RNA sequence: GGGAACGACUCGAGUAGAGUCGAAAAUUCCCCUAUUUCGAUAGGGGAACACCUGCGGGCGGCUCGCAGUUCCGACUUCCUCCUGCUCUGAGUCAAAGGGCGAUAGGCCUCGGUUCGCCGAGGCCAAUAUUUAGGCUCAAUUCGUUGAGCCUAAAUAAAAAGAAACAACAACAACAAC
Reactivity to 2A3 in 0.01 (KOAc 150mM, MgCl2 10mM, bicine 150mM(pH8.5), 24C), signal-to-noise 1, nucleotides 027 to 126: u020u000c000c000c000c000u010a000u030u090u050c150g070a000u000a000g000g010g000g010a000a000c030a040c020c000u010g020c100g000g060g030c090g040g040c060u050c040g000c000a020g020u060u090c080c070g040a030c040u100u080c000c030u040c010c010u000g010c000u020c030u060g030a030g080u070c030a150a080a000g020g010g040c030g010a010u060a160g020g000c010c000u010c000g000g060u050u040c190g020c050c000g010a010g010g010c030c000a000a010
Reactivity to DMS in 0.01 (KOAc 150mM, MgCl2 10mM, bicine 150mM(pH8.5), 24C), signal-to-noise 4, nucleotides 027 to 126: u010u000c000c000c000c000u000a000u000u000u000c130g000a040u000a010g010g010g010g000a010a010c120a060c150c000u000g010c050g010g020g020c100g000g010c040u000c020g010c050a040g000u000u000c040c030g010a080c070u000u000c050c040u010c080c060u000g000c010u000c000u000g000a090g010u000c150a080a130a090g000g000g010c030g010a120u000a080g010g010c000c010u010c000g010g010u000u020c210g010c000c010g000a010g010g040c010c000a000a010